This 207-nucleotide RNA was probed chemically with 2A3. 2A3 adducts were read by reverse transcription with SuperScript II with manganese. The reactions ran in a buffer of 150 mM KOAc, 10 mM MgCl2 and 150 mM bicine (pH 8.5), at 24 C.
[RMDB]
RNA sequence: GGGAACGACUCGAGUAGAGUCGAAAAGCAGAAACUAUGUAGGGUACGACUGUUCGUCGAUUAAAAAGUUACAUGAGCUGGGUUAAAUACGUCGUGAGACAGUAUGGUUUCUAUCUUCUAGAGGGAAUUAGAAUAUAAUAAGGAUUAACCUUUGUACCCAGAUACCGAUGUUCGCAUCGGUAUCUGGAAAAGAAACAACAACAACAAC
Reactivity to 2A3 in 0.01 (KOAc 150mM, MgCl2 10mM, bicine 150mM(pH8.5), 24C), signal-to-noise 1, nucleotides 027 to 156: g000c020a000g010a020a030a010c040u040a050u180g080u190a110g000g000g120u050a000c000g010a000c040u000g120u160u080c030g010u010c000g000a010u010u050a020a040a040a000a000g040u100u100a050c070a090u080g030a020g060c040u030g000g000g030u050u100a020a070a000u090a030c060g010u020c020g050u100g080a060g020a030c020a050g070u130a050u080g010g050u040u060u000c050u030a090u000c010u010u030c000u000a000g000a030g030g040g050a010a060u020u010a090g010a010a010u030a000u000a030a060u020a010a020g000g020a030u020u050a080a030c010c000u040u060u090g030u070a070c000